Overview: Source: RMDB library OK2TST, as collected in RNAgym. This 177-nucleotide RNA was probed chemically with 2A3 and DMS.
RNA sequence: GGGAACGACUCGAGUAGAGUCGAAAAAAAUUGUGGCUGUCAAAGGGCUGGGUGGUUUUCAUCUGGCGGUGGAUGCCACCAAUGCUGUCGCCGUGGCCCGCUUGCGCGAGCGUAAACAUCGGCCGUCACACGCAUACUAUUUCGAUAGUAUGCGUGUAAAAGAAACAACAACAACAAC
Reactivity to 2A3 in 0.01 (KOAc 150mM, MgCl2 10mM, bicine 150mM(pH8.5), 24C), signal-to-noise 3, nucleotides 027 to 126: a000a030a000u140u080g020u030g020g000c030u040g080u210c040a070a140a150g120g060g020c010u040g040g000g010u000g000g040u050u050u000u150c020a020u000c010u080g170g000c070g000g040u020g050g000a020u040g000c000c000a000c000c010a060a050u100g020c010u030g060u110c020g000c020c010g000u040g040g010c040c010c000g000c070u100u170g050c080g020c040g080a050g060c020g030u080a020a080a070c040a070u110c030g050g010c010c020g070u040c010
Reactivity to DMS in 0.01 (KOAc 150mM, MgCl2 10mM, bicine 150mM(pH8.5), 24C), signal-to-noise 5, nucleotides 027 to 126: a040a050a080u000u000g010u010g000g010c010u010g010u010c080a070a100a090g000g010g010c010u000g010g000g030u000g000g010u000u000u010u000c020a020u000c030u000g020g010c220g000g010u010g010g010a030u000g000c010c010a020c010c080a070a050u000g010c050u000g000u000c060g010c010c030g010u000g000g010c020c010c040g030c050u000u000g010c230g010c030g000a040g000c030g010u010a050a060a140c080a090u000c050g000g010c020c080g010u010c080

High 2A3 reactivity points to a flexible backbone, as in loops and unpaired stretches.
Reactivities are given for positions 27 through 126.
For 2A3 the reverse transcriptase was SuperScript II with manganese.